[RMDB]
RNA sequence: GGGAACGACUCGAGUAGAGUCGAAAAGGAUAACACGGCGCGCAGCGAAUGGGCGAAUCUGGUAAAAAGCCGUAGUAAAUCUGAACAGGCGCAGUUGGCGCGCUAUGCGUUUAACCAGCACUGGUGGGUGGGUAUACCACUUCGGUGGUAUACCCACAAAAGAAACAACAACAACAAC
Reactivity to 2A3 in 0.01 (KOAc 150mM, MgCl2 10mM, bicine 150mM(pH8.5), 24C), signal-to-noise 1, nucleotides 027 to 126: g110g000a060u040a140a060c060a000c080g000g000c040g000c060g000c130a080g010c050g040a080a020u020g050g040g020c000g000a000a220u030c020u050g030g220u220a170a100a060a080a000g030c000c030g000u000a000g000u000a080a210a160u120c020u000g060a090a060c030a100g080g000c060g000c000a030g030u030u000g070g000c000g000c000g000c000u000a010u070g000c000g000u000u020u000a010a010c010c000a030g100c000a020c040u000g040g000u000g020g260
Reactivity to DMS in 0.01 (KOAc 150mM, MgCl2 10mM, bicine 150mM(pH8.5), 24C), signal-to-noise 2, nucleotides 027 to 126: g010g020a160u030a160a030c000a000c130g000g010c000g000c060g040c080a060g000c090g000a070a030u100g010g000g030c000g010a050a070u030c000u040g020g000u030a020a100a090a130a120g000c020c000g000u040a140g000u020a110a050a090u000c020u000g010a050a170c100a060g000g000c000g000c000a080g000u010u020g000g010c020g020c110g020c050u010a000u030g000c040g020u000u000u040a050a150c000c000a100g000c180a040c040u000g000g010u000g000g000